[RMDB]
RNA sequence: GGGAACGACUCGAGUAGAGUCGAAAAACCCAGCUCUUAAGAUGGUUCAAACACAUCUUAGCCACUAUGUUCUUAACAUAGAUUGGUUGUGGUUUGCAUUUGAGACUGGUUUGGCAUACAUGCUCUACCAUAUUCAGCUGUUCGCAGCUGAAUAUGGAAAAGAAACAACAACAACAAC
Reactivity to 2A3 in 0.01 (KOAc 150mM, MgCl2 10mM, bicine 150mM(pH8.5), 24C), signal-to-noise 4, nucleotides 027 to 126: a000c020c000c000a000g020c050u000c000u020u060a060a030g040a070u020g060g050u170u160c010a020a020a020c030a020c010a140u030c050u110u070a010g000c000c000a000c010u010a000u000g010u050u020c110u170u250a010a000c000a030u020a050g070a140u020u120g020g020u050u100g020u070g000g060u020u020u030g010c010a030u010u000u030g020a010g010a030c000u010g020g000u050u080u100g050g000c020a060u100a150c040a080u230g020c010u000c010u000a050
Reactivity to DMS in 0.01 (KOAc 150mM, MgCl2 10mM, bicine 150mM(pH8.5), 24C), signal-to-noise 3, nucleotides 027 to 126: a070c090c000c010a040g010c140u000c050u000u000a060a040g010a020u000g000g020u020u010c070a030a020a050c040a050c030a040u010c170u010u010a060g000c030c020a050c000u000a000u000g010u000u010c300u010u010a040a020c010a010u000a010g010a120u010u000g000g010u000u010g020u000g010g000u000u010u000g020c050a050u000u000u000g010a020g010a070c020u010g000g010u010u000u000g000g010c050a080u000a080c220a090u010g020c030u000c090u010a210